RNA sequence: GGGAACGACUCGAGUAGAGUCGAAAAACGCUGACAAAGAUGGUCCUUCCGUCAAGUUCACGUACUGAAGCCUUAGCCGCCUCGCAAGACGACUCGCCGCGACUUCCUCUUAUCGAGAGGUAAACAAGGAGCGAGUUUAAAGGCUAGUCAGCUCAGCCUACAUAGCUCAGUUCGCUGAGCUAUGUAGAAAAGAAACAACAACAACAAC
Reactivity to DMS in 0.01 (KOAc 150mM, MgCl2 10mM, bicine 150mM(pH8.5), 24C), signal-to-noise 3, nucleotides 027 to 156: a100c020g000c050u000g000a030c020a120a090a120g010a080u000g020g000u000c160c160u000u000c000c020g060u000c040a050a120g020u020u000c040a050c070g010u000a090c060u010g030a130a060g000c010c030u000u010a100g020c030c010g030c010c020u010c100g020c170a100a120g020a060c040g000a040c000u000c120g040c030c030g010c030g000a210c070u000u000c000c000u010c010u000u000a160u020c230g020a100g020a030g010g020u000a000a020a220c050a050a120g030g000a080g010c030g010a050g000u000u010u000a050a050a080g010g000c010u000a020g000u000c010a020g000c000u010c040a090g000c070
Reactivity to 2A3 in 0.01 (KOAc 150mM, MgCl2 10mM, bicine 150mM(pH8.5), 24C), signal-to-noise 7, nucleotides 027 to 156: a010c040g010c060u010g000a010c030a030a160a030g050a060u100g010g020u180c060c070u100u040c010c030g010u010c040a070a070g040u150u150c090a060c130g070u130a020c080u040g030a040a020g020c010c000u020u040a010g010c000c010g030c030c020u050c050g050c080a080a060g060a070c040g020a020c020u010c010g010c020c020g080c060g080a080c030u110u040c040c010u000c020u040u120a210u280c140g040a040g000a000g010g000u050a060a090a040c050a070a060g070g000a080g050c000g000a000g000u020u010u020a050a020a000g000g000c000u010a010g000u010c010a000g000c020u010c030a030g020c000